Overview:
An RNA of 170 nucleotides, treated with DMS and 2A3 and read out base by base. For 2A3 the reverse transcriptase was SuperScript II with manganese. Source: RMDB library 15KLIB, as collected in RNAgym. Conditions: 150 mM KOAc, 10 mM MgCl2 and 150 mM bicine (pH 8.5), 24 C. For DMS the reverse transcriptase was MarathonRT.
RNA sequence: GGGAACGACUCGAGUAGAGUCGAAAAACGAACCUGUGCAGGGUCGUAAAAUGCUGAUGGCUCUUCUUUCUGAUAAUGCCUAUCUCAAAUGGGCGCGUGUUGAAGGUAAGGACGGAUUUGUCAGUGUCACGCUUUGCGUUCGCGCAAAGCAAAAGAAACAACAACAACAAC
Reactivity to DMS in 0.01 (KOAc 150mM, MgCl2 10mM, bicine 150mM(pH8.5), 24C), signal-to-noise 4, nucleotides 027 to 129: a000c040g020a030a020c000c000u040g000u030g000c210a090g010g020g000u020c030g030u020a040a120a080a100u100g020c060u020g000a080u050g040g000c000u000c000u000u000c030u020u050u000c000u020g020a000u050a040a060u050g000c000c000u020a040u010c000u000c200a030a050a020u000g030g000g000c000g040c180g000u030g030u060u040g000a020a010g000g000u020a040a040g000g010a050c070g040g040a160u030u020u060g020u010c020a010g020u000g030u040c040a040c170
Reactivity to 2A3 in 0.01 (KOAc 150mM, MgCl2 10mM, bicine 150mM(pH8.5), 24C), signal-to-noise 9, nucleotides 027 to 129: a000c020g030a040a070c000c000u060g070u160g080c130a070g010g000g040u010c000g000u030a020a030a020a100u160g020c050u020g020a060u110g080g010c010u010c000u060u010c000u020u100u000c050u050g050a030u040a170a060u190g000c000c010u030a050u030c140u010c090a080a090a050u110g000g000g000c050g010c060g040u080g030u010u080g080a080a040g030g000u060a020a010g020g030a040c050g030g030a080u050u050u090g010u000c000a000g000u000g010u030c020a010c070